[RMDB]
The record gives the reactivity of an RNA of 207 nucleotides to 2A3. It was measured as part of the RMDB library M2RFPK. 2A3 adducts were read by reverse transcription with SuperScript II with manganese.
RNA sequence: GGGAACGACUCGAGUAGAGUCGAAAAAGGUGCAUGCCGAGGUGCGGUAGGCGUCGUUAACAAACCGCAAAAAAAUAGUCGCAAACGACGAAAACUACGCACUCGCAGCUUAAUAACCUGCGCUGAGAAAACCCGACUACCUUCGGGUAGUCGGGAACGAUACCGAGUUGUUCGCAACUCGGUAUCGAAAAGAAACAACAACAACAAC
Reactivity to 2A3 in 0.01 (KOAc 150mM, MgCl2 10mM, bicine 150mM(pH8.5), 24C), signal-to-noise 1, nucleotides 027 to 156: a030g020g030u060g020c070a160u050g050c070c000g010a060g010g140u040g000c030g070g000u020a010g010g060c000g000u000c010g010u010u030a130a140c100a130a130a120c090c120g000c000a070a050a000a000a010a070a100u270a100g060u050c100g010c090a050a040a040c000g010a000c000g010a000a060a020a070c000u010a010c010g020c030a020c000u020c000g000c010a010g000c000u090u080a060a060u010a060a140c020c010u010g020c070g000c080u100g010a020g070a080a170a080a030c000c000c000g000a000c000u000a000c000c000u000u080c110g000g050g000u000a000g000u000c000g000g000g010a040a000